[RMDB]
RNA sequence: GGGAACGACUCGAGUAGAGUCGAAAAGAUAUGGAUCCAUGACUCUUUUGACGAAAUGGUGUCGGAAACGACAUGCAUUUCGAUAAGAGUUAUGGAUCCUAAGUCAAAAGUAUGCUUCGGCAUACAACCAAAUGCAUAUGUUCGCAUAUGCAUUUGGAAAAGAAACAACAACAACAAC
Reactivity to DMS in 0.01 (KOAc 150mM, MgCl2 10mM, bicine 150mM(pH8.5), 24C), signal-to-noise 6, nucleotides 027 to 126: g010a030u000a300u010g000g000a000u000c000c000a010u000g010a010c010u000c000u000u000u000u010g010a300c120g010a010a000a000u000g010g020u000g000u000c010g000g000a140a090a240c010g010a010c000a000u000g010c010a000u000u000u000c000g000a120u000a020a010g000a020g010u000u000a010u000g000g000a000u000c000c000u000a010a050g020u010c030a110a080a140a170g010u000a000u000g010c000u000u020c280g050g000c000a010u000a000c000a100a210
Reactivity to 2A3 in 0.01 (KOAc 150mM, MgCl2 10mM, bicine 150mM(pH8.5), 24C), signal-to-noise 6, nucleotides 027 to 126: g040a020u060a050u150g010g000a000u000c000c010a010u010g000a020c000u010c020u090u120u210u280g290a160c050g010a000a000a010u010g000g000u000g010u000c000g020g040a090a060a060c020g020a000c030a010u110g210c010a010u110u020u000c000g000a010u020a010a010g000a000g010u000u000a000u000g000g000a000u000c000c000u000a010a000g010u000c020a010a030a010a170g000u010a000u000g000c010u050u150c300g150g000c020a000u000a020c020a010a030
Structure probing data (DMS and 2A3) for a 177-nucleotide construct. Values cover nucleotides 27 to 126. For DMS, 9,441 sequencing reads were counted. The data come from the RNA Mapping Database (RMDB), library TTRDES. For 2A3 the reverse transcriptase was SuperScript II with manganese. For 2A3, 22,721 sequencing reads were counted.